Conditions: 150 mM KOAc, 10 mM MgCl2 and 150 mM bicine (pH 8.5), 24 C. The record gives the reactivity of an RNA of 207 nucleotides to 2A3. Values cover nucleotides 27 to 156.

RNA sequence: GGGAACGACUCGAGUAGAGUCGAAAAACUGCAUCUACGGAUGCAGAACUACGUUCAUCCAAUUUAUUUGGACGCAUGAAAUGAGAAUCGGGAACGGGAUUCUCAUACGCAGGCUACGGCCUGCGAAAAAACUCCUUAUGCUUCGGCAUAAGGAGAAGUCAGUCUUAAUCUUCGGAUUAAGACUGACAAAAGAAACAACAACAACAAC
Reactivity to 2A3 in 0.01 (KOAc 150mM, MgCl2 10mM, bicine 150mM(pH8.5), 24C), signal-to-noise 1, nucleotides 027 to 156: a010c000u000g000c000a000u000c010u000a020c190g130g010a000u000g010c000a000g020a030a000c060u110a060c050g000u010u000c000a010u000c000c000a030a000u140u130u140a220u100u210u040g010g000a000c020g080c140a120u190g070a050a140a030u000g000a000g020a000a000u000c010g000g050g010a000a000c000g000g000g000a000u000u000c000u010c000a000u000a010c000g010c000a000g020g000c020u030a150c240g160g000c030c010u000g000c000g020a030a000a000a000a000a000c000u000c000c010u000u000a000u000g010c000u020u040c090g060g010c000a010u000a000a000g010g010a000g000a000a000